[RMDB]
RNA sequence: GGGAACGACUCGAGUAGAGUCGAAAAGAUAUGGAUCGCUCUCAUUGAGCGAAGAACAUCGAUCGGAAACGAUCGAUGGGAGCUCUGUGAGAGGCGAUCCUAAGUCAAACGAGACGUUCGCGUCUCGCAUAAACUUCAUGUUCGCAUGAAGUUUAUGAAAAGAAACAACAACAACAAC
Reactivity to 2A3 in 0.01 (KOAc 150mM, MgCl2 10mM, bicine 150mM(pH8.5), 24C), signal-to-noise 7, nucleotides 027 to 126: g030a020u090a040u200g000g000a000u000c000g000c010u000c000u010c010a010u020u050g010a010g000c000g210a070a020g000a020a000c000a000u000c000g000a000u010c010g020g030a080a060a070c020g000a000u000c000g000a000u000g000g000g000a010g000c010u000c010u020g030u020g020a020g020a080g030g020c000g000a000u000c000c000u000a010a010g030u010c050a120a060a080c020g000a000g000a000c020g040u100u090c300g040c010g140u010c000u000c000g000
Reactivity to DMS in 0.01 (KOAc 150mM, MgCl2 10mM, bicine 150mM(pH8.5), 24C), signal-to-noise 9, nucleotides 027 to 126: g010a060u010a300u010g000g010a020u000c000g010c000u000c000u000c020a020u000u000g010a010g020c010g000a060a110g000a150a200c010a000u000c010g010a010u000c000g020g000a160a140a250c010g010a000u000c000g010a010u000g000g000g010a100g010c000u000c000u010g010u000g000a030g000a030g030g020c000g010a000u000c000c000u000a010a100g010u000c050a080a120a300c020g000a010g000a020c010g020u000u010c270g010c020g010u000c000u000c000g010
Conditions: 150 mM KOAc, 10 mM MgCl2 and 150 mM bicine (pH 8.5), 24 C. An RNA of 177 nucleotides, treated with 2A3 and DMS and read out base by base. The 2A3 profile rests on 57,866 reads. It was measured as part of the RMDB library TTRDES.